[RMDB]
RNA sequence: GGGAACGACUCGAGUAGAGUCGAAAACAAAGUGCUGGGAUUACAAAUGUGAGCCACCACUCCCAGCCUCUGCUCAGUAAUUUUGGAUGAUGCACAGGGAGCAGAGUCAGAAUUACUUCUAAGCCUAGUGCUCCCUUUUAUUCGUAAAAGGGAGCACAAAAGAAACAACAACAACAAC
Reactivity to DMS in 0.01 (KOAc 150mM, MgCl2 10mM, bicine 150mM(pH8.5), 24C), signal-to-noise 1, nucleotides 027 to 126: c050a040a050a100g000u000g020c010u000g030g010g030a140u020u010a160c200a030a050a070u000g000u000g020a100g020c070c110a080c140c110a030c080u000c020c000c000a040g000c040c010u000c020u000g000c030u010c120a020g010u000a020a050u000u000u000u020g010g010a080u000g040a250u000g000c120a030c060a120g000g000g010a110g030c040a010g000a160g000u000c020a030g000a060a000u000u000a030c100u050u000c140u020a040a110g010c120c060u020a180
Reactivity to 2A3 in 0.01 (KOAc 150mM, MgCl2 10mM, bicine 150mM(pH8.5), 24C), signal-to-noise 2, nucleotides 027 to 126: c010a000a110a000g090u070g040c010u010g000g000g100a130u210u170a130c050a100a130a130u260g070u030g060a050g040c020c030a020c000c010a010c050u010c000c010c010a010g050c020c000u030c000u010g010c000u010c040a020g020u000a030a030u000u070u070u120g180g060a050u060g010a010u030g090c070a070c100a140g070g090g050a060g050c000a000g000a000g010u000c020a000g000a020a030u010u030a050c000u070u070c050u060a050a060g010c060c030u070a050

This 177-nucleotide RNA was probed chemically with DMS and 2A3. Conditions: 150 mM KOAc, 10 mM MgCl2 and 150 mM bicine (pH 8.5), 24 C. Values are in units of 0.01, from 0 to 300, in steps of 10. The 2A3 profile rests on 1,150 reads.